[RMDB]
RNA sequence: GGGAACGACUCGAGUAGAGUCGAAAAUUACAAUGAUUAUAAUGAUAAUAACAAUUUAACUAGGAGGUAUAAUGCAAGGCAAAGCAAAAGAUGUAGUCCAUAGCAUUACAAAAAACAUACUGAAGUUAAUGAAAGAACAAGGUAGUCAAUGGACAAAGUGUAGAUUGGAGUUCGCUCCAAUCUACACAAAAGAAACAACAACAACAAC
Reactivity to 2A3 in 0.01 (KOAc 150mM, MgCl2 10mM, bicine 150mM(pH8.5), 24C), signal-to-noise 1, nucleotides 027 to 156: u070u020a040c040a110a050u070g010a030u060u160a090u270a300a190u080g030a000u060a210a000u100a050a100c090a100a090u050u080u060a140a040c060u030a040g000g000a000g050g000u150a050u050a040a000u010g030c010a070a080g010g020c040a070a000a040g050c010a040a000a010a120g060a030u040g010u100a050g020u000c000c000a010u030a000g000c000a010u000u080a010c100a000a170a030a080a050a030c110a080u190a020c010u010g010a060a010g000u010u110a090a070u120g070a080a000a020g010a040a010c000a050a020g060g000u010a010g020u030c060a000a120u070g040g040a030c000a020a070a040
Chemical mapping of a 207-nucleotide RNA with 2A3. The reactions ran in a buffer of 150 mM KOAc, 10 mM MgCl2 and 150 mM bicine (pH 8.5), at 24 C. It was measured as part of the RMDB library OK3TST. For 2A3 the reverse transcriptase was SuperScript II with manganese.